[RMDB]
The record gives the reactivity of an RNA of 207 nucleotides to DMS and 2A3.
RNA sequence: GGGAACGACUCGAGUAGAGUCGAAAACAUGGAGGAGUCCGUGGCAUUCAGGUUGGCUAAGGAGGGAUGAACCGGGCCAGGGGUGAAAACCAGCAGCCAAGAGUUCCCGUGGUAGGCAGUAGUGGGAUAGCGUACCGGAGUGGACUGCCGUUAUCAGCUUAUAAACGGUCUUCGGACCGUUUAUAAGAAAAGAAACAACAACAACAAC
Reactivity to DMS in 0.01 (KOAc 150mM, MgCl2 10mM, bicine 150mM(pH8.5), 24C), signal-to-noise 1, nucleotides 027 to 156: c050a100u000g000g000a150g030g010a170g040u000c020c020g000u010g060g030c040a160u010u010c090a120g010g000u000u000g010g010c040u020a150a200g000g010a110g030g000g040a100u000g020a050a110c010c050g000g030g030c020c020a090g080g000g030g000u020g000a060a080a100a020c030c020a070g020c020a070g010c000c020a030a090g020a090g000u000u000c010c000c010g070u010g000g010u000a040g020g000c030a060g010u000a100g000u020g010g000g020a150u000a070g000c110g050u010a090c040c020g020g000a140g040u000g020g000a080c050u000g020c000c010g040u010u000a090u000c040a260g010
Reactivity to 2A3 in 0.01 (KOAc 150mM, MgCl2 10mM, bicine 150mM(pH8.5), 24C), signal-to-noise 2, nucleotides 027 to 156: c060a070u070g030g000a040g020g020a070g050u030c020c040g060u070g010g080c060a040u100u080c090a040g090g000u060u030g040g020c010u080a060a030g040g010a010g020g000g070a010u050g010a040a010c030c030g040g020g020c040c050a060g000g000g010g000u090g050a030a020a020a110c000c020a010g010c020a000g000c040c030a040a030g040a010g050u010u020c000c000c000g010u010g000g030u030a070g030g000c030a020g020u080a020g050u130g020g000g070a070u070a060g000c030g000u030a030c020c050g050g020a040g040u100g000g020a010c000u010g020c030c000g000u010u010a050u050c040a020g020
2A3 adducts were read by reverse transcription with SuperScript II with manganese. Reactivities are rounded to 0.1 and cut off at 0 and 3.